Chemical mapping of a 207-nucleotide RNA with 2A3 and DMS. Conditions: 150 mM KOAc, 10 mM MgCl2 and 150 mM bicine (pH 8.5), 24 C.

[RMDB]
RNA sequence: GGGAACGACUCGAGUAGAGUCGAAAAGAAAGCCAGCGAUAAGCUGACGCUUAACUCUCUCAAAAACGCCUUAAAUGCCAAUGGUAUUUUGAAGAUUAAAGGCGGUGGCUUGCUUGAUUUUAAAACUAAACUCUCACGCUCACGGCAAGCGAUGAAGACCAGAAGAGCAAUUCGUUGCUCUUCUGGUAAAAGAAACAACAACAACAAC
Reactivity to 2A3 in 0.01 (KOAc 150mM, MgCl2 10mM, bicine 150mM(pH8.5), 24C), signal-to-noise 1, nucleotides 027 to 156: g030a000a030a000g000c000c020a000g000c030g170a260u090a240a020g000c000u020g030a020c050g000c010u070u000a020a040c000u020c000u020c000u000c070a050a050a090a050a050c090g000c020c000u090u030a050a090a050u100g000c060c020a200a220u290g000g000u050a080u010u110u050u040g140a090a040g020a010u090u100a120a020a070g000g010c000g000g010u040g030g000c030u020u020g000c020u110u040g010a190u160u050u150u220a080a090a030a090c080u060a050a100a050c100u090c030u000c070a040c100g080c000u030c010a040c030g000g050c080a010a010g000c020g040a040u180g000a040a020g030
Reactivity to DMS in 0.01 (KOAc 150mM, MgCl2 10mM, bicine 150mM(pH8.5), 24C), signal-to-noise 1, nucleotides 027 to 156: g000a220a060a070g000c010c000a050g000c030g000a180u000a090a170g060c020u000g000a020c000g000c180u170u030a070a050c100u000c020u010c020u000c040a090a110a050a070a040c080g000c000c000u000u000a100a020a050u010g020c050c040a150a140u000g060g000u000a020u000u000u030u000g000a130a170g020a120u000u000a020a000a080g030g070c000g030g000u000g020g000c010u010u050g000c000u010u010g050a180u000u000u000u000a010a050a100a250c060u000a090a130a040c050u010c020u010c000a060c030g020c000u000c020a050c150g010g040c050a080a020g010c000g000a070u000g010a110a120g000